[RMDB]
RNA sequence: GGGAACGACUCGAGUAGAGUCGAAAACGAGGAGUACACAACAUCCACGAAAAAUUACACCUACACAUAGUUGAUAUGUGUAAUGAUGGUCGUAUGUAGGUGAUCAUCUCGUGGAUGUUGUAUUCAGGCGUCUCGAUGAUUUCGAUCAUUGAGGUGCAAAAGAAACAACAACAACAAC
Reactivity to DMS in 0.01 (KOAc 150mM, MgCl2 10mM, bicine 150mM(pH8.5), 24C), signal-to-noise 9, nucleotides 027 to 126: c060g000a120g010g000a080g010u010a060c140a050c100a030a010c000a010u000c000c010a010c010g000a010a020a080a040a060u010u010a040c080a020c010c030u000a000c010a010c010a120u030a090g010u060u020g000a130u000a000u000g000u000g000u000a010a090u000g000a010u000g010g010u000c000g010u040a080u040g020u040a120g000g010u020g000a020u010c010a000u000c010u000c000g020u000g000g000a010u000g010u000u000g010u000a010u010u000c030a130g000
Reactivity to 2A3 in 0.01 (KOAc 150mM, MgCl2 10mM, bicine 150mM(pH8.5), 24C), signal-to-noise 9, nucleotides 027 to 126: c050g030a070g140g030a040g060u120a040c030a000c010a090a010c000a010u000c000c000a000c010g040a070a040a020a000a010u100u080a050c060a020c050c030u030a010c020a000c010a070u190a050g080u140u180g120a120u030a020u040g010u000g000u000a010a030u020g000a000u010g010g020u010c030g040u150a190u300g240u220a080g080g190u120g030a010u010c000a000u000c000u000c000g000u000g000g000a000u000g000u000u000g000u000a000u000u010c010a000g100
An RNA of 177 nucleotides, treated with DMS and 2A3 and read out base by base. Conditions: 150 mM KOAc, 10 mM MgCl2 and 150 mM bicine (pH 8.5), 24 C. The 2A3 profile rests on 132,596 reads. For 2A3 the reverse transcriptase was SuperScript II with manganese. High 2A3 reactivity points to a flexible backbone, as in loops and unpaired stretches. Source: RMDB library OK1LIB, as collected in RNAgym.